[RMDB]
RNA sequence: GGGAACGACUCGAGUAGAGUCGAAAAUGCAUGGCCCUCAUUAGCCAGAAGGCUUGUCCGACUUGUUCUUAUGGCAGAGACCGGUCCGGAAGGUGUGGAAGCACAAAAGCCUUCUCUUUUUUGAGACAUCUCACUCUGUUGCCCAGGCUGGAGUGCAGUCUCACAGAGAUUUCGAUCUCUGUGAGACAAAAGAAACAACAACAACAAC
Reactivity to 2A3 in 0.01 (KOAc 150mM, MgCl2 10mM, bicine 150mM(pH8.5), 24C), signal-to-noise 2, nucleotides 027 to 156: u230g020c050a040u040g040g000c030c000c000u040c010a050u040u080a010g020c050c000a020g000a070a010g020g010c000u010u090g050u000c010c010g030a030c010u030u060g120u170u060c010u030u130a120u160g160g000c070a010g010a000g000a050c020c050g000g000u130c120c050g030g000a070a000g080g000u020g040u030g070g210a160a070g010c040a010c020a040a080a000a000g000c000c000u030u000c010u000c000u050u130u050u020u040u120g050a060g020a040c050a050u090c030u000c050a020c020u000c000u020g100u140u060g050c010c020c000a020g020g020c020u040g020g020a000g000u000g000c020a020